[RMDB]
RNA sequence: GGGAACGACUCGAGUAGAGUCGAAAAGAUCCGAUGCGGAUUGUCAACGUGUAUCGUCCGGAGUCUGCCGUUAGCGAUCCUGAGUACAUCGAAUCUCUGAAGAAUCUCCCGCUGAUCGACGAGCACGCAGUUCAGGACAUUUCGAUGUCCUGAACUGAAAAGAAACAACAACAACAAC
Reactivity to 2A3 in 0.01 (KOAc 150mM, MgCl2 10mM, bicine 150mM(pH8.5), 24C), signal-to-noise 1, nucleotides 027 to 126: g030a010u000c000c000g020a070u060g010c040g030g050a010u020u040g060u080c020a050a050c030g030u040g000u100a150u250c020g080u050c120c000g050g000a060g090u020c050u120g040c020c000g040u030u050a020g040c020g010a010u030c000c020u090g050a040g120u100a070c010a020u000c030g010a020a030u000c020u000c040u110g100a130a030g060a080a110u000c030u010c040c000c000g000c080u070g000a100u090c070g030a050c020g010a010g020c040a000c040g000
Reactivity to DMS in 0.01 (KOAc 150mM, MgCl2 10mM, bicine 150mM(pH8.5), 24C), signal-to-noise 2, nucleotides 027 to 126: g000a030u010c010c010g040a070u010g000c070g010g000a050u000u000g020u000c070a060a070c020g000u010g020u000a050u000c090g000u000c020c050g010g010a130g010u000c100u000g030c030c020g010u030u020a060g000c040g000a020u000c020c010u010g010a130g000u010a180c020a030u010c020g000a050a040u000c020u000c050u000g010a130a090g010a120a130u000c040u000c000c010c060g040c040u000g000a090u010c070g000a050c090g010a060g000c040a060c070g010
An RNA of 177 nucleotides, treated with 2A3 and DMS and read out base by base. The RNA was probed in 150 mM KOAc, 10 mM MgCl2 and 150 mM bicine (pH 8.5) at 24 C. For DMS, 2,730 sequencing reads were counted.